[RMDB]
RNA sequence: GGGAACGACUCGAGUAGAGUCGAAAAUCAUAAAGUGUUACCUUCAUAUUUUGCAAAACCUCUUAUCCAAUUGCGAGUGCAAAGUAGAGUUGGAACAUUCCAUUUAACAAUCAUAAUGGUCAUCUGGCAUAGCAUAGAGGUUCGCCUCUAUGCUAUGAAAAGAAACAACAACAACAAC
Reactivity to 2A3 in 0.01 (KOAc 150mM, MgCl2 10mM, bicine 150mM(pH8.5), 24C), signal-to-noise 3, nucleotides 027 to 126: u080c020a050u170a170a210a030g040u010g030u070u050a300c000c000u000u000c000a010u020a000u010u020u010u000g010c000a020a020a140a250c050c010u030c020u070u130a120u140c090c090a130a160u070u130g020c020g030a020g070u030g010c010a010a000a020g000u010a000g010a030g000u030u030g000g000a000a000c000a000u030u080c000c000a030u030u020u050a140a090c120a070a060u180c070a080u130a210a020u050g000g040u060c020a110u020c140u070g100g020
Reactivity to DMS in 0.01 (KOAc 150mM, MgCl2 10mM, bicine 150mM(pH8.5), 24C), signal-to-noise 5, nucleotides 027 to 126: u010c110a090u010a070a080a080g010u000g000u000u000a110c010c010u010u010c010a120u000a020u000u000u000u000g000c010a070a030a100a170c280c030u000c050u010u010a120u010c220c170a060a080u000u010g010c210g010a110g010u000g010c020a020a020a000g020u000a020g000a080g010u000u000g010g010a050a020c030a030u000u010c010c010a030u010u010u000a080a080c140a040a080u010c160a050u010a040a040u000g020g000u010c140a070u000c040u010g010g010